[RMDB]
RNA sequence: GGGAACGACUCGAGUAGAGUCGAAAAGAUAUGGAACUGGACAGGGAGCUGUUCGGAAACGAAUACAGCAUCGAUCUGUGCAGUUCCUAAGUCAAAAGGACUAUCAGGGUUCGCCCUGAUAGUCCAACCGUGCUAAAAAGUUCGCUUUUUAGCACGGAAAAGAAACAACAACAACAAC
Reactivity to DMS in 0.01 (KOAc 150mM, MgCl2 10mM, bicine 150mM(pH8.5), 24C), signal-to-noise 2, nucleotides 027 to 126: g010a030u000a300u000g000g000a020a010c000u010g010g000a010c000a030g010g010g020a050g010c010u000g020u000u000c000g000g000a060a100a140c020g000a030a060u000a030c040a030g060c020a250u010c190g010a050u000c000u000g020u000g000c020a000g000u000u000c000c000u000a010a040g000u010c020a050a070a130a090g020g000a010c000u010a000u000c010a000g000g000g010u000u000c300g000c000c000c010u000g010a000u000a000g000u000c000c010a010a020
Reactivity to 2A3 in 0.01 (KOAc 150mM, MgCl2 10mM, bicine 150mM(pH8.5), 24C), signal-to-noise 1, nucleotides 027 to 126: g000a000u030a030u110g000g000a020a020c010u010g020g260a010c000a010g240g040g030a010g000c020u000g010u000u000c000g010g000a000a010a010c000g010a020a000u260a180c020a020g000c030a140u240c080g100a150u080c020u010g020u020g070c000a000g000u000u000c000c000u000a000a000g000u000c000a000a000a020a270g000g000a000c000u000a010u000c010a000g040g010g010u060u110c160g100c020c030c010u030g000a000u000a000g000u000c000c000a000a000
The record gives the reactivity of an RNA of 177 nucleotides to DMS and 2A3.
The reactions ran in a buffer of 150 mM KOAc, 10 mM MgCl2 and 150 mM bicine (pH 8.5), at 24 C.
2A3 adducts were read by reverse transcription with SuperScript II with manganese.